An RNA of 177 nucleotides, treated with 2A3 and DMS and read out base by base. For DMS the reverse transcriptase was MarathonRT. Reactivities are given for positions 27 through 126. The 2A3 profile rests on 1,137 reads. The DMS profile rests on 1,944 reads. It was measured as part of the RMDB library OK2TRN.
[RMDB]
RNA sequence: GGGAACGACUCGAGUAGAGUCGAAAAGCGCCCGCCAAUCACCUGCGCGGGUCCGGUCACCUUGAUCAGCACUUCGUCGGCAGCUGUUUUACCGCUGGUGGUUACGAUAUAGCCGAAAUCGAGUGCCUCCCAAACGAGAUUUCGAUCUCGUUUGGGAAAAAGAAACAACAACAACAAC
Reactivity to 2A3 in 0.01 (KOAc 150mM, MgCl2 10mM, bicine 150mM(pH8.5), 24C), signal-to-noise 1, nucleotides 027 to 126: g020c000g060c000c030c040g000c010c020a060a110u090c060a140c100c120u030g000c050g000c030g040g010g020u060c040c030g020g050u050c020a060c090c000u030u150g060a050u100c050a000g000c010a000c030u090u090c060g010u010c050g050g000c000a020g000c010u130g120u060u130u090u090a020c040c040g050c110u150g040g180u210g020g050u070u070a050c060g010a060u030a010u080a270g030c010c010g070a010a030a060u080c020g000a000g040u020g000c000c010
Reactivity to DMS in 0.01 (KOAc 150mM, MgCl2 10mM, bicine 150mM(pH8.5), 24C), signal-to-noise 2, nucleotides 027 to 126: g010c300g040c020c020c010g010c020c040a090a100u000c070a060c110c060u000g010c130g000c010g030g000g000u010c110c000g010g000u000c100a080c060c050u000u000g000a080u000c080a170g010c010a050c040u000u000c120g000u000c000g000g020c000a110g000c110u000g000u010u010u000u000a050c090c050g000c120u000g010g030u000g030g010u010u010a050c070g000a060u010a120u000a100g020c010c010g000a030a050a080u010c100g000a120g000u000g010c000c130